[RMDB]
RNA sequence: GGGAACGACUCGAGUAGAGUCGAAAAUGUGACGGUAUUACAAUUACACAUCCUGUCCCGUUUUUCAGGCCAUUAUAGCCUGUUAUUUUUGUGCAUCAUAGUCUUAUGCAGACGGCAGAGGCAGGGCAACGCAAUACGCCUUCGGGCGUAUUGCGUUAAAAGAAACAACAACAACAAC
Reactivity to DMS in 0.01 (KOAc 150mM, MgCl2 10mM, bicine 150mM(pH8.5), 24C), signal-to-noise 1, nucleotides 027 to 126: u000g010u030g010a080c090g000g040u000a100u000u010a120c280a050a120u000u000a130c020a130c020a080u000c010c000u000g010u000c010c000c000g010u000u030u010u010u000c000a000g010g000c000c080a090u000u010a190u020a150g010c030c010u000g020u000u000a030u010u000u010u020u000g010u010g010c040a030u000c040a120u000a120g000u000c050u000u030a060u010g000c050a090g010a030c110g000g000c300a050g000a100g020g000c000a040g000g000g030c120

Chemical mapping of a 177-nucleotide RNA with DMS. It was measured as part of the RMDB library OK2TST. Conditions: 150 mM KOAc, 10 mM MgCl2 and 150 mM bicine (pH 8.5), 24 C. Values are in units of 0.01, from 0 to 300, in steps of 10.